[RMDB]
Chemical mapping of a 177-nucleotide RNA with DMS and 2A3.
RNA sequence: GGGAACGACUCGAGUAGAGUCGAAAAUAGGACAAGAAAUUGGAGGAGUUUGGCUGCGAGCAGGAGCAACUUGAGACGUCUAACUCAGAAGGCCUUGGCCCACCCUGGGCUGUCAUGCCAUGGAUGACAUUUAGUCUCACUUCGGUGAGACUAAAUGAAAAGAAACAACAACAACAAC
Reactivity to DMS in 0.01 (KOAc 150mM, MgCl2 10mM, bicine 150mM(pH8.5), 24C), signal-to-noise 6, nucleotides 027 to 126: u040a070g010g010a060c070a050a050g000a050a100a090u020u010g000g000a130g000g000a070g010u010u000u000g010g010c020u000g010c140g000a100g010c040a080g000g010a100g010c100a060a060c070u010u000g000a070g000a090c100g010u010c030u020a070a070c050u020c020a090g000a110a080g010g000c040c030u010u010g000g010c000c010c030a070c100c030c050u010g000g000g020c010u000g000u010c050a050u020g010c030c030a060u040g010g000a080u010g000a170
Reactivity to 2A3 in 0.01 (KOAc 150mM, MgCl2 10mM, bicine 150mM(pH8.5), 24C), signal-to-noise 7, nucleotides 027 to 126: u130a010g040g020a020c060a080a050g080a090a160a080u200u140g050g030a090g030g000a040g060u050u090u060g070g010c040u050g010c020g040a050g020c050a040g020g050a050g030c040a020a060c010u030u080g020a020g000a060c030g030u020c040u090a060a050c020u020c030a020g050a120a050g060g010c030c000u050u080g010g000c030c020c000a060c030c010c020u070g000g030g000c020u030g060u070c020a030u130g040c040c000a030u060g100g020a050u120g060a010

It was measured as part of the RMDB library OK1LIB. Reactivities are given for positions 27 through 126. For 2A3, 7,137 sequencing reads were counted. The RNA was probed in 150 mM KOAc, 10 mM MgCl2 and 150 mM bicine (pH 8.5) at 24 C. 2A3 adducts were read by reverse transcription with SuperScript II with manganese.